[RMDB]
RNA sequence: GGGAACGACUCGAGUAGAGUCGAAAAUACCGUCUUCUCCCCGACGGUUUCAAUCCAUAGCUUCACGUUGUGUAGCGUAGGUGGAAGGUAUCGCGUGGUGUAUAAACACCACAUAGUCUCUUAGGGGUCAAGCUGAUAAACUUCGGUUUAUCAGCAAUAAUCUCGGUAUGUUCGCAUACCGAGAUUAAAAAGAAACAACAACAACAAC
Reactivity to DMS in 0.01 (KOAc 150mM, MgCl2 10mM, bicine 150mM(pH8.5), 24C), signal-to-noise 2, nucleotides 027 to 156: u010a030c000c010g020u000c010u000u000c030u000c010c000c020c060g000a040c020g030g020u000u000u010c060a060a160u010c010c020a080u000a170g000c030u010u010c040a050c020g030u000u000g000u010g050u000a060g030c000g030u000a090g050g050u030g000g010a080a070g010g060u000a050u000c070g010c060g030u010g030g030u000g050u000a110u010a130a150a140c000a010c000c000a010c000a040u010a070g010u000c040u000c020u000u010a200g000g010g020g000u000c020a070a160g030c010u000g000a000u010a000a000a010c010u000u000c300g090g000u010u000u000a000u010c000a000g010c000a010a000
Reactivity to 2A3 in 0.01 (KOAc 150mM, MgCl2 10mM, bicine 150mM(pH8.5), 24C), signal-to-noise 5, nucleotides 027 to 156: u050a000c000c000g010u010c020u210u030c030u070c000c000c000c000g000a010c000g010g020u000u040u060c020a020a050u000c010c010a040u030a110g000c000u070u090c030a040c040g300u300u300g000u090g030u040a020g030c020g060u080a080g080g070u000g020g020a040a030g090g030u090a050u170c060g030c050g090u010g010g000u010g030u010a080u100a300a230a020c000a000c000c000a000c000a000u000a000g040u000c010u000c020u120u170a060g000g000g030g010u040c060a060a050g000c000u000g000a010u000a010a000a000c000u020u060c130g030g000u010u000u000a010u000c000a000g000c000a000a000